[RMDB]
RNA sequence: GGGAACGACUCGAGUAGAGUCGAAAAGAUAUGGAGAAGGAAUCGCGAUAAGCGUGUAUCGGAAACGAUAUAAACGCUUUUGACGCGACCUUCUCCUAAGUCAAAGUGUACGGUUCGCCGUACACAAGUCUACUGCAGACUUCGGUCUGCAGUAGACAAAAGAAACAACAACAACAAC
Reactivity to 2A3 in 0.01 (KOAc 150mM, MgCl2 10mM, bicine 150mM(pH8.5), 24C), signal-to-noise 1, nucleotides 027 to 126: g020a000u010a000u140g000g000a000g030a030a010g080g010a190a300u150c000g000c000g110a170u060a300a040g000c000g020u000g010u010a000u010c010g000g000a000a010a010c000g000a000u010a010u040a090a300a020c010g030c000u050u100u150u280g300a170c090g000c020g000a020c000c000u020u020c000u000c000c000u030a000a010g000u000c040a000a160a080g010u030g000u000a000c000g000g050u050u070c300g000c120c000g030u010a010c000a040c010a000a000
Reactivity to DMS in 0.01 (KOAc 150mM, MgCl2 10mM, bicine 150mM(pH8.5), 24C), signal-to-noise 1, nucleotides 027 to 126: g000a070u000a300u010g000g010a020g030a040a000g000g020a130a140u000c010g010c000g030a100u000a020a030g070c000g000u000g000u000a000u010c000g010g000a110a040a130c000g000a020u000a010u000a040a090a230c000g000c000u010u000u010u000g010a180c020g000c000g000a010c010c000u000u000c000u000c000c020u000a020a030g000u010c010a080a140a220g040u010g020u000a000c040g010g000u000u020c230g000c020c010g000u010a000c000a010c010a040a040